[RMDB]
RNA sequence: GGGAACGACUCGAGUAGAGUCGAAAAAGCGCACACACUCCGCAGGAGCUUGCGCGGAUUGCCAGUGAGGCGCGAGUGGGGGGUAUGCUCAGCGGCAAGGCAGGCCUGGUGCACAUACACACAGGCGGAUAUAUUGUGCAUUCGUGCACAAUAUAUCAAAAGAAACAACAACAACAAC
Reactivity to 2A3 in 0.01 (KOAc 150mM, MgCl2 10mM, bicine 150mM(pH8.5), 24C), signal-to-noise 7, nucleotides 027 to 126: a000g040c030g000c020a020c010a010c010a020c060u020c010c020g080c110a130g060g120a050g050c070u100u110g010c060g000c020g020g030a100u110u130g050c040c020a040g030u030g100a100g040g030c030g000c060g020a030g020u150g020g080g000g000g000g010u050a030u080g010c000u000c040a020g010c000g030g000c010a030a060g050g000c030a010g040g070c000c000u010g000g000u010g000c030a040c010a190u220a050c020a010c010a000c000a020g030g000c020g010
Reactivity to DMS in 0.01 (KOAc 150mM, MgCl2 10mM, bicine 150mM(pH8.5), 24C), signal-to-noise 9, nucleotides 027 to 126: a110g010c020g020c020a060c190a100c110a120c030u000c020c020g010c110a120g010g010a130g010c100u000u000g010c050g020c010g000g000a130u000u000g010c060c060a120g010u010g010a160g000g010c030g010c060g010a060g030u000g000g010g000g000g000g010u000a050u000g000c040u000c050a070g000c070g000g000c060a060a070g010g000c080a090g010g000c020c010u000g000g010u010g000c060a100c210a120u010a110c040a030c030a090c030a020g000g010c040g000

Overview:
An RNA of 177 nucleotides, treated with 2A3 and DMS and read out base by base. The 2A3 profile rests on 19,302 reads. In probing experiments dimethyl sulfate is read out at A N1 and C N3, which are open when not base-paired. The data come from the RNA Mapping Database (RMDB), library OK2TRN.